The data come from the RNA Mapping Database (RMDB), library TTRDEL. Chemical mapping of a 177-nucleotide RNA with 2A3 and DMS. The 2A3 profile rests on 17,408 reads. Reactivities are given for positions 27 through 126. 2A3 adducts were read by reverse transcription with SuperScript II with manganese. The RNA was probed in 150 mM KOAc, 10 mM MgCl2 and 150 mM bicine (pH 8.5) at 24 C.
RNA sequence: GGGAACGACUCGAGUAGAGUCGAAAAGAUAUGGAAAUGUCUGCACCAGCUUGGACCUCGGAAACGAGCUAGCUGGGCAGAGCAUUUCCUAAGUCAAAACUUGAGACGAGUUCGCUCGUCUCAAGAACCUUGUAGUACUCUUCGGAGUACUACAAGGAAAAGAAACAACAACAACAAC
Reactivity to 2A3 in 0.01 (KOAc 150mM, MgCl2 10mM, bicine 150mM(pH8.5), 24C), signal-to-noise 5, nucleotides 027 to 126: g020a030u070a040u150g000g020a000a000a010u020g020u000c000u000g000c160a300c290c000a010g020c010u070u140g100g130a290c040c020u000c020g000g030a090a090a050c010g010a000g030c020u010a000g000c000u000g000g000g000c000a000g010a000g000c000a000u010u000u000c000c000u000a090a020g040u000c030a020a020a130a170c000u000u010g000a000g000a000c000g000a000g000u050u120c220g110c090u000c000g000u000c000u000c000a000a000g000a000a000
Reactivity to DMS in 0.01 (KOAc 150mM, MgCl2 10mM, bicine 150mM(pH8.5), 24C), signal-to-noise 5, nucleotides 027 to 126: g010a030u000a300u010g010g000a000a000a000u000g000u010c000u000g000c000a170c010c010a020g020c010u000u010g030g000a110c300c010u000c010g010g000a120a090a200c010g000a010g010c020u010a010g010c000u000g000g000g010c000a010g000a050g010c010a000u000u000u000c010c000u010a010a060g010u000c030a110a060a080a150c010u000u000g000a010g000a020c000g000a020g010u000u010c210g020c000u000c000g000u000c000u000c000a000a000g000a060a130